The record gives the reactivity of an RNA of 177 nucleotides to 2A3. 2A3 adducts were read by reverse transcription with SuperScript II with manganese.
RNA sequence: GGGAACGACUCGAGUAGAGUCGAAAACUGAGGUGUGCACACUGGAGUACCUCUUGCAAACCUCACUCAACGCGCUCUCCAAGUGCCAGCUACCACGCUACGAGCAAGACUACCUCCAGCCCGCGCGCCAUCCCGGCCCAUUCGUGGGCCGGGAUGGAAAAGAAACAACAACAACAAC
Reactivity to 2A3 in 0.01 (KOAc 150mM, MgCl2 10mM, bicine 150mM(pH8.5), 24C), signal-to-noise 2, nucleotides 027 to 126: c030u030g020a020g090g000u010g020u060g020c000a010c040a050c100u080g000g000a020g010u050a110c020c010u000c010u000u010g010c040a080a070a060c010c010u060c030a000c010u060c020a120a050c100g060c000g030c020u000c010u010c000c010a130a040g030u000g060c010c010a020g000c040u060a110c020c100a040c100g050c020u110a070c100g040a080g040c010a080a000g040a040c010u040a050c030c000u000c000c000a000g020c020c020c010g010c000g000c010g020

The 2A3 profile rests on 1,026 reads.